An RNA of 177 nucleotides, treated with 2A3 and DMS and read out base by base. For DMS the reverse transcriptase was MarathonRT. The reactions ran in a buffer of 150 mM KOAc, 10 mM MgCl2 and 150 mM bicine (pH 8.5), at 24 C. Reactivities are given for positions 27 through 126. Source: RMDB library TTRDES, as collected in RNAgym.

RNA sequence: GGGAACGACUCGAGUAGAGUCGAAAAGAUAUGGACAGAUGAGCUUUUGACGGAAUGAUAUUCGGAAACGAAUAUCUUCCGAUAAGCUCACUGUCCUAAGUCAAAGGUCAGCCUUCGGGCUGACCAAUCAAAAUGCGCAGUUCGCUGCGCAUUUUGAAAAAGAAACAACAACAACAAC
Reactivity to 2A3 in 0.01 (KOAc 150mM, MgCl2 10mM, bicine 150mM(pH8.5), 24C), signal-to-noise 1, nucleotides 027 to 126: g100a040u060a000u090g030g000a010c010a000g300a300u040g000a020g060c000u080u290u300u300g300a210c110g020g030a000a080u300g020a070u000a010u000u000c000g000g000a000a110a000c000g010a010a000u000a000u000c000u000u000c020c040g000a010u010a020a000g000c040u000c000a010c000u000g000u000c020c000u010a040a040g000u000c010a030a190a000g010g000u000c010a000g010c060c000u050u300c300g100g010g000c040u000g000a000c000c000a000a010
Reactivity to DMS in 0.01 (KOAc 150mM, MgCl2 10mM, bicine 150mM(pH8.5), 24C), signal-to-noise 1, nucleotides 027 to 126: g000a020u010a300u050g000g000a010c000a010g000a160u010g020a010g000c010u000u000u010u000g020a290c140g030g000a020a000u020g000a010u000a000u000u000c000g000g020a140a110a200c010g030a010a010u000a000u000c000u000u000c010c010g000a040u030a010a010g030c020u010c000a010c000u000g020u000c000c000u000a000a070g010u000c070a120a120a180g000g000u000c000a000g000c000c000u000u010c230g020g010g000c000u010g000a010c000c000a010a020